RNA sequence: GGGAACGACUCGAGUAGAGUCGAAAAGUUUCAUGAAAUGUCGGCGUGACUUUAAAACUUUGUGCAUGUCCGCUUUUUGAAAUUUAUAAACUACUGAUGAAGUGGAGGUGGGAUAGUGGUGCGCUAACAUAGUCCGCUAUUUCGAUAGCGGACUAUGAAAAGAAACAACAACAACAAC
Reactivity to 2A3 in 0.01 (KOAc 150mM, MgCl2 10mM, bicine 150mM(pH8.5), 24C), signal-to-noise 2, nucleotides 027 to 126: g020u020u000u000c020a040u040g030a030a020a010u080g060u100c000g030g040c000g000u020g020a040c000u070u150u120a090a050a010a010c000u010u030u130g100u170g070c000a000u010g060u050c000c040g000c000u000u010u000u000u000g000a000a000a000u020u030u000a080u070a030a090a040c060u100a010c000u060g060a050u070g020a170a000g080u050g060g030a090g030g070u150g040g010g010a050u020a060g010u020g000g010u040g010c030g000c000u000a020a000
Reactivity to DMS in 0.01 (KOAc 150mM, MgCl2 10mM, bicine 150mM(pH8.5), 24C), signal-to-noise 5, nucleotides 027 to 126: g020u000u000u000c000a020u040g010a020a030a040u000g010u050c020g010g000c010g020u000g000a050c010u010u020u020a050a060a120a140c220u000u010u000g000u020g000c020a000u000g000u050c010c000g000c010u000u000u000u010u000g000a010a010a020u000u000u000a100u020a100a080a090c060u020a090c100u000g010a130u050g010a130a080g010u010g020g010a060g010g000u030g010g000g000a070u020a050g010u010g000g000u010g010c110g000c040u010a050a210
Source: RMDB library OK1LIB, as collected in RNAgym. This 177-nucleotide RNA was probed chemically with 2A3 and DMS. For DMS the reverse transcriptase was MarathonRT. The RNA was probed in 150 mM KOAc, 10 mM MgCl2 and 150 mM bicine (pH 8.5) at 24 C. For 2A3, 1,447 sequencing reads were counted. The DMS profile rests on 11,003 reads. 2A3 adducts were read by reverse transcription with SuperScript II with manganese.